This 177-nucleotide RNA was probed chemically with DMS.
Conditions: 150 mM KOAc, 10 mM MgCl2 and 150 mM bicine (pH 8.5), 24 C.
Reactivities are rounded to 0.1 and cut off at 0 and 3.
Source: RMDB library TTRINS, as collected in RNAgym.
Values cover nucleotides 27 to 126.
For DMS the reverse transcriptase was MarathonRT.
[RMDB]
RNA sequence: GGGAACGACUCGAGUAGAGUCGAAAAGAUAUGGAUCGUUCACGGGCUGCUUGGACCAAUGUGGAAAUUGUCUUCGGAAACGAAGACAAUUUCCACAUUGCUAGCAGCCGUGAGACGAUCCUAAGUCGACAUCGGUAUAGUUCGCUAUACCGAUGUCAAAAGAAACAACAACAACAAC
Reactivity to DMS in 0.01 (KOAc 150mM, MgCl2 10mM, bicine 150mM(pH8.5), 24C), signal-to-noise 1, nucleotides 027 to 126: g010a080u000a300u010g010g000a000u000c000g010u010u000c030a010c010g030g030g020c000u010g000c010u000u000g030g020a160c300c020a000a000u000g050u000g010g000a030a000a000u000u010g000u000c000u000u000c000g010g000a090a060a220c010g010a020a010g000a010c000a000a000u000u000u000c000c000a000c000a000u000u000g010c020u000a020g010c000a010g010c000c000g010u000g010a060g020a030c000g010a000u010c000c000u000a030a090g000u010c090